[RMDB]
RNA sequence: GGGAACGACUCGAGUAGAGUCGAAAAGAAAGAAAGAAAACGCCUUGCUGUGGCUGGUCAAAUGGAACCAAGUCAGGUGUUUCUGCGAGGUUUGGUCCCCUUCAACCAGCUACUGCGUCGUGAAUAACUCUUGAGUUCGUUUCGACGAACUCAAGAGAAAAGAAACAACAACAACAAC
Reactivity to DMS in 0.01 (KOAc 150mM, MgCl2 10mM, bicine 150mM(pH8.5), 24C), signal-to-noise 1, nucleotides 027 to 126: g000a040a160a020g010a110a110a110g000a040a140a130a030c070g040c140c030u000u000g020c030u000g000u000g000g000c090u000g020g000u000c020a050a020a020u000g010g060a010a010c000c000a020a020g000u000c000a040g000g000u010g000u000u080u040c150u000g020c000g010a200g000g000u000u000u020g030g010u000c030c020c020c010u000u000c160a270a020c040c010a020g000c010u020a000c000u000g000c030g000u000c050g010u000g000a160a150u030a040a180
Reactivity to 2A3 in 0.01 (KOAc 150mM, MgCl2 10mM, bicine 150mM(pH8.5), 24C), signal-to-noise 2, nucleotides 027 to 126: g090a000a080a020g120a020a030a030g060a020a070a000a000c020g050c020c030u050u170g000c020u040g000u000g030g000c000u010g000g000u030c020a040a070a120u120g000g000a040a000c000c000a030a000g050u060c020a050g060g080u130g100u150u220u090c040u030g020c010g030a110g020g030u000u030u000g010g010u040c040c050c000c050u050u070c030a020a010c000c020a000g000c000u000a010c010u020g010c010g010u060c000g000u020g030a090a000u090a050a060